An RNA of 177 nucleotides, treated with 2A3 and DMS and read out base by base. DMS (dimethyl sulfate) methylates the pairing face of unpaired adenines and cytosines. The 2A3 profile rests on 9,032 reads.

[RMDB]
RNA sequence: GGGAACGACUCGAGUAGAGUCGAAAAGAAGAGACCGCCACCAGGAGUCAGGGUUCAGACACGAUCCAAGAGAACACGGUUACACUGACUGUGAAGCGGAAGAGGCAAAGAGAGUGGCGGAAGAGAACAUUACCGUCCUGUUCGCAGGACGGUAAUGAAAAGAAACAACAACAACAAC
Reactivity to 2A3 in 0.01 (KOAc 150mM, MgCl2 10mM, bicine 150mM(pH8.5), 24C), signal-to-noise 7, nucleotides 027 to 126: g110a050a010g070a000g030a020c010c000g000c010c000a000c010c000a030g080g060a020g070u010c010a010g020g020g010u060u170c080a030g020a060c020a010c150g000a000u000c020c020a190a050g090a020g010a090a010c080a020c080g010g000u030u040a030c060a020c020u030g010a000c010u030g080u070g200a070a000g010c010g050g050a030a030g080a030g040g020c040a060a120a000g120a020g010a010g020u010g000g010c000g010g010a020a010g050a000g010a020a010
Reactivity to DMS in 0.01 (KOAc 150mM, MgCl2 10mM, bicine 150mM(pH8.5), 24C), signal-to-noise 5, nucleotides 027 to 126: g020a130a140g000a110g010a110c010c010g010c000c000a000c010c050a200g020g000a040g020u000c010a040g000g000g010u000u030c180a070g000a040c050a080c050g000a090u000c020c030a110a120g000a200g000a030a060c050a030c030g000g010u000u010a050c060a060c040u010g000a020c010u000g040u010g000a090a090g010c020g010g000a100a060g000a110g010g000c050a040a140a050g010a180g000a110g040u000g000g020c030g000g000a050a070g010a110g010a110a100
The reactions ran in a buffer of 150 mM KOAc, 10 mM MgCl2 and 150 mM bicine (pH 8.5), at 24 C.